[RMDB]
RNA sequence: GGGAACGACUCGAGUAGAGUCGAAAAAGACCCGAAACCUAGUGACCUAUCCAUGAGCAGGGUGAAGGUGUGGUAAGACGCACUGGAGGCCCGAACCAGGACACGUUGAAAAGUGUUUGGAUGACUUGUGGAUAGCGGAGAAAUUCCAAACGAACUGCAGAAUUCUUACGUUCGCGUAAGAAUUCUGAAAAGAAACAACAACAACAAC
Reactivity to DMS in 0.01 (KOAc 150mM, MgCl2 10mM, bicine 150mM(pH8.5), 24C), signal-to-noise 1, nucleotides 027 to 156: a170g040a230c020c000c010g070a170a100a060c060c030u000a080g030u000g000a120c030c010u000a030u000c000c010a010u010g000a070g000c030a140g020g000g010u000g010a300a180g000g030u000g050u000g010g030u000a300a140g000a200c080g040c000a010c010u030g000g000a300g020g060c000c010c010g000a080a200c030c050a220g010g000a020c010a010c020g000u010u000g000a050a080a070a090g020u000g000u000u010u000g000g000a180u020g000a090c000u000u000g050u000g000g000a030u000a010g020c100g010g010a090g000a070a140a150u020u020c010c020a050a060a170c060g000a090a160c220u010g020
Reactivity to 2A3 in 0.01 (KOAc 150mM, MgCl2 10mM, bicine 150mM(pH8.5), 24C), signal-to-noise 1, nucleotides 027 to 156: a000g080a050c030c000c000g010a070a060a000c030c060u090a060g060u060g180a050c010c000u000a000u000c010c000a000u010g020a000g040c010a030g020g010g000u050g030a040a020g090g000u000g000u060g020g010u040a100a000g160a130c010g010c000a000c000u020g010g000a050g070g190c000c000c000g010a050a020c000c000a000g120g000a010c010a000c000g090u140u180g130a100a070a090a030g020u010g050u000u000u030g030g040a090u110g050a100c000u040u000g000u040g000g000a000u000a000g000c000g040g000a040g060a020a090a040u280u030c040c060a080a060a100c080g010a060a000c040u130g000